[RMDB]
Structure probing data (2A3) for a 177-nucleotide construct. It was measured as part of the RMDB library OK1LIB.
RNA sequence: GGGAACGACUCGAGUAGAGUCGAAAAAACAUACUCCGACUAAACCAAUGAGUACGGUUAAAGAUCAGCAUAAAACAGCUAAAGCAUUACCAGAAACAGGUAGUGAAAAUAAUAAUUCAAAUAAUGGCUCUACAAAACGCUUCGGCGUUUUGUAGAGAAAAGAAACAACAACAACAAC
Reactivity to 2A3 in 0.01 (KOAc 150mM, MgCl2 10mM, bicine 150mM(pH8.5), 24C), signal-to-noise 1, nucleotides 027 to 126: a000a000c170a030u220a060c100u090c000c000g080a040c140u170a000a170a200c030c020a000a080u070g020a150g020u090a110c000g160g000u080u090a000a000a120g030a020u080c000a030g110c000a090u150a300a110a000a000c030a030g060c000u080a140a040a000g060c000a060u000u000a000c000c000a010g080a080a170a080c220a000g000g060u000a000g080u000g090a050a180a000a000u110a050a050u090a020a020u220u180c060a060a140a000u110a110a080u210g000g000